[RMDB]
RNA sequence: GGGAACGACUCGAGUAGAGUCGAAAAGCGAUGGGUGAACAGGCGCAUAUCCACCAUCGGGCGGGCCGCCGACAGCUGCUUGCGGAUAAACCAGGUUAACAUCGCCGCCCCGCCGAGCGCCACCAGCCGAGGGCCAAAAUUUCGAUUUUGGCCCUCGAAAAGAAACAACAACAACAAC
Reactivity to 2A3 in 0.01 (KOAc 150mM, MgCl2 10mM, bicine 150mM(pH8.5), 24C), signal-to-noise 3, nucleotides 027 to 126: g070c010g000a030u040g000g050g070u220g120a120a050c100a160g020g010c010g020c020a010u030a140u240c010c050a060c000c000a030u010c020g000g010g010c000g000g020g000c000c000g030c030c010g040a060c040a060g030c050u070g010c000u010u030g020c120g240g090a260u200a150a070a020c040c020a030g010g000u040u060a070a010c010a030u020c010g030c010c000g010c020c000c000c000g000c010c000g010a020g030c000g000c000c000a000c010c020a020g090c070
Reactivity to DMS in 0.01 (KOAc 150mM, MgCl2 10mM, bicine 150mM(pH8.5), 24C), signal-to-noise 2, nucleotides 027 to 126: g000c020g090a000u000g000g000g000u050g000a090a080c080a140g020g000c040g060c030a100u020a160u010c090c050a070c080c000a080u030c000g040g000g000c050g000g000g070c100c000g000c240c010g000a090c180a160g000c030u000g030c030u000u060g000c160g110g000a130u050a200a110a110c120c000a030g010g020u000u000a160a080c160a030u030c050g040c300c060g000c300c030c000c000g010c000c000g000a050g010c000g000c000c010a090c000c030a150g050c190